[RMDB]
RNA sequence: GGGAACGACUCGAGUAGAGUCGAAAAUGUAUAGUACCUUACACUGCAUUGUACUAUUAUGCUACAUUCUAUUUUACUAAUGAGCCUGCAUUUAUUAUGCAUGUUUCUUGGUACAUUAUGUUCGGGCCAAUAUCCGUUUCUUCGGAAACGGAUAUUGAAAAGAAACAACAACAACAAC
Reactivity to DMS in 0.01 (KOAc 150mM, MgCl2 10mM, bicine 150mM(pH8.5), 24C), signal-to-noise 3, nucleotides 027 to 126: u010g020u010a010u000a040g010u000a010c020c070u000u000a100c100a160c230u010g010c080a020u000u000g010u000a010c040u000a030u000u010a050u000g020c090u010a100c070a060u000u000c060u000a060u020u000u000u000a020c030u000a010a030u000g010a030g000c010c030u010g010c010a000u000u010u010a090u020u000a030u000g020c000a010u000g000u010u000u000c110u000u000g020g010u000a020c230a050u000u000a030u010g020u000u000c080g010g000g010c140
Reactivity to 2A3 in 0.01 (KOAc 150mM, MgCl2 10mM, bicine 150mM(pH8.5), 24C), signal-to-noise 4, nucleotides 027 to 126: u070g040u010a030u010a040g010u020a010c010c000u030u030a060c210a080c090u180g010c030a050u040u030g010u010a000c000u030a030u130u030a070u100g010c020u030a080c020a070u070u000c030u090a100u060u090u020u010a020c000u010a000a040u070g010a010g000c010c020u010g010c010a020u060u060u070a240u300u130a010u060g000c010a000u010g010u000u110u010c010u000u020g000g010u030a030c020a070u090u190a080u150g060u020u050c020g020g040g050c050